RNA sequence: GGGAACGACUCGAGUAGAGUCGAAAAGCGUUAGCAUUGUGCAGUGGUGUAAUGUGGUUGUACACUUAUAGCAUUGGAGAAGCCUCAAGCCCCAUUGCCUAUCUGGUUUUUGUCACUACACUCACUAGCUAUUAUAUAGGUUCGCCUAUAUAAUAGCAAAAGAAACAACAACAACAAC
Reactivity to 2A3 in 0.01 (KOAc 150mM, MgCl2 10mM, bicine 150mM(pH8.5), 24C), signal-to-noise 8, nucleotides 027 to 126: g030c030g050u090u090a020g010c050a080u070u120g060u110g060c050a020g010u010g080g010u020g010u040a080a160u140g000u020g030g030u040u050g050u070a020c120a010c050u020u020a030u040a040g000c020a010u000u030g020g010a200g020a180a010g010c010c030u120c070a030a020g010c000c010c000c000a000u020u020g000c000c010u020a030u040c040u030g070g000u030u030u010u130u150g030u020c010a010c040u030a010c020a010c030u120c010a020c020u020a020
Reactivity to DMS in 0.01 (KOAc 150mM, MgCl2 10mM, bicine 150mM(pH8.5), 24C), signal-to-noise 9, nucleotides 027 to 126: g010c080g010u010u010a070g010c060a110u010u000g010u000g020c070a050g030u000g010g010u000g000u000a020a080u010g020u000g010g010u000u010g020u000a080c100a080c030u000u000a030u000a050g010c030a040u000u000g000g010a090g010a110a110g020c050c060u010c220a080a240g010c020c030c000c010a030u000u000g010c120c040u000a030u000c050u000g000g010u000u000u010u000u000g010u000c030a030c040u000a030c040a040c030u000c030a030c070u000a170